[RMDB]
Conditions: 150 mM KOAc, 10 mM MgCl2 and 150 mM bicine (pH 8.5), 24 C. An RNA of 177 nucleotides, treated with DMS and 2A3 and read out base by base. For DMS, 1,099 sequencing reads were counted. For 2A3, 1,930 sequencing reads were counted. For DMS the reverse transcriptase was MarathonRT. 2A3 adducts were read by reverse transcription with SuperScript II with manganese.
RNA sequence: GGGAACGACUCGAGUAGAGUCGAAAAAAAAGAUAUGGAAUGAACUACGAUGUAAAGUGUAGCGAAGAACUAGCAUCGGAAACGAUGCUAGGGAGCUACAUGAAGAAGUCGCAUUCCUAAGUCAAAAUCAUGAUCUAACGUUCGCGUUAGAUCAUGAAAAAGAAACAACAACAACAAC
Reactivity to DMS in 0.01 (KOAc 150mM, MgCl2 10mM, bicine 150mM(pH8.5), 24C), signal-to-noise 2, nucleotides 027 to 126: a030a030a070a040g000a050u000a300u000g010g000a040a000u010g000a090a100c230u000a300c050g000a000u000g020u000a020a080a300g040u050g000u000a000g050c000g040a070a150g030a070a090c000u000a000g000c000a000u000c000g000g000a010a020a060c000g040a000u000g010c000u000a010g010g020g000a000g030c000u000a000c010a000u000g000a030a050g000a180a300g000u000c000g000c000a050u000u000c000c000u040a030a150g000u020c040a040a030a130a170
Reactivity to 2A3 in 0.01 (KOAc 150mM, MgCl2 10mM, bicine 150mM(pH8.5), 24C), signal-to-noise 1, nucleotides 027 to 126: a000a000a000a000g100a050u090a060u090g000g010a000a030u000g000a100a150c110u140a030c300g020a030u080g000u040a000a000a070g020u000g020u020a000g020c030g230a300a030g040a080a020c000u040a010g030c000a000u010c000g000g040a000a000a020c010g000a010u020g000c000u000a000g000g000g020a000g000c000u010a010c000a000u000g000a020a220g000a000a000g010u010c010g000c020a000u000u060c020c000u010a170a020g080u000c040a060a000a070a120